[RMDB]
RNA sequence: GGGAACGACUCGAGUAGAGUCGAAAAGCGCGGGCCGGCUGGGCCACUCCUCGACCGCCGCCCCCACCCCUCUGGUUGGGGCCGCGCCGGCGCGGACUCCUGCGGUCCGGGGCGGCGGGCCUACGCAAAUAUUACGACCUUUCGAGGUCGUAAUAUUAAAAGAAACAACAACAACAAC
Reactivity to DMS in 0.01 (KOAc 150mM, MgCl2 10mM, bicine 150mM(pH8.5), 24C), signal-to-noise 2, nucleotides 027 to 126: g030c120g000c050g030g010g030c090c010g030g020c080u000g000g000g030c060c070a070c100u010c060c000u000c050g000a130c050c010g020c010c030g020c000c010c010c020c080a160c070c000c030c070u010c130u010g020g020u000u000g020g000g000g000c010c000g010c000g030c020c050g000g010c010g010c010g020g020a040c020u000c050c110u010g020c070g000g020u000c100c070g000g000g000g010c000g000g010c000g000g000g010c010c020u000a040c120g020c090a060

Chemical mapping of a 177-nucleotide RNA with DMS.
Conditions: 150 mM KOAc, 10 mM MgCl2 and 150 mM bicine (pH 8.5), 24 C.